RNA sequence: GGGAACGACUCGAGUAGAGUCGAAAAGAAACGCACGUAAGGAUGGGAAUCGUGCGGAAAUAACAGACCAUCCGAAGGCGGGAAUAAACUCUCGAAUAACCGCUGGAGAGGAAUCUGGAAAAGAAAACCCAUAUGAUAACUUCGGUUAUCAUAUGGGAAAAGAAACAACAACAACAAC
Reactivity to DMS in 0.01 (KOAc 150mM, MgCl2 10mM, bicine 150mM(pH8.5), 24C), signal-to-noise 5, nucleotides 027 to 126: g000a130a090a130c010g000c000a020c000g030u020a210a130g010g010a060u020g000g010g010a180a120u020c020g010u010g010c030g000g000a060a070a060u030a070a120c010a000g010a040c010c050a150u030c010c020g000a300a130g010g000c000g010g010g000a070a110u020a060a100a070c090u000c110u010c100g010a150a080u030a060a160c000c010g010c000u000g010g000a240g000a030g000g000a090a140u010c000u000g010g020a090a070a060a100g010a070a050a070a100
Reactivity to 2A3 in 0.01 (KOAc 150mM, MgCl2 10mM, bicine 150mM(pH8.5), 24C), signal-to-noise 6, nucleotides 027 to 126: g060a010a080a010c000g000c000a010c010g020u090a050a070g160g090a170u300g060g010g070a050a060u120c010g000u000g000c000g000g010a010a040a000u090a020a000c000a000g020a010c020c000a120u040c030c000g010a010a000g040g000c030g010g010g030a030a070u120a090a140a090c070u100c010u040c120g040a100a050u080a120a030c000c000g000c010u040g000g020a100g010a030g050g030a010a030u000c020u010g040g070a040a050a030a060g100a010a090a020a020